RNA sequence: GGGAACGACUCGAGUAGAGUCGAAAAAUUCUCCCAAGAAGGUCCAAGAGAACUUUCAAGAAGGAGGAUUUUUCCCCAAGACGCUGGUGGACUCUUGGAAUGGGAAAGAGGAGGGCGGAAAAAGAGGCUGUAUCAAUAGGUUCGCCUAUUGAUACAGAAAAGAAACAACAACAACAAC
Reactivity to 2A3 in 0.01 (KOAc 150mM, MgCl2 10mM, bicine 150mM(pH8.5), 24C), signal-to-noise 2, nucleotides 027 to 126: a000u010u000c000u000c000c010c000a000a060g010a010a000g030g000u020c050c050a180a010g110a000g000a160a030c010u070u030u020c060a120a010g070a040a050g020g010a000g020g000a000u020u000u010u030u010c000c000c000c000a040a070g090a020c050g010c080u060g060g050u070g070g010a040c000u040c030u040u030g010g020a050a050u070g050g010g030a090a200a030g020a030g020g030a050g050g000g000c000g010g030a050a070a030a030a020g070a050g050g010
Reactivity to DMS in 0.01 (KOAc 150mM, MgCl2 10mM, bicine 150mM(pH8.5), 24C), signal-to-noise 3, nucleotides 027 to 126: a040u000u000c010u000c000c010c050a170a270g010a020a020g000g010u000c010c030a190a170g010a190g010a030a010c000u000u000u000c010a080a140g010a160a100g000g000a020g010g000a000u000u000u010u010u010c090c000c000c120a110a160g000a110c110g030c020u000g010g020u010g010g010a170c030u000c030u000u000g010g010a120a060u000g000g020g020a080a040a050g010a050g000g000a090g000g000g020c040g010g010a050a050a050a100a070g020a080g010g020
Annotation: Chemical mapping of a 177-nucleotide RNA with 2A3 and DMS. The reactions ran in a buffer of 150 mM KOAc, 10 mM MgCl2 and 150 mM bicine (pH 8.5), at 24 C. Reactivities are given for positions 27 through 126. Source: RMDB library 15KREP, as collected in RNAgym.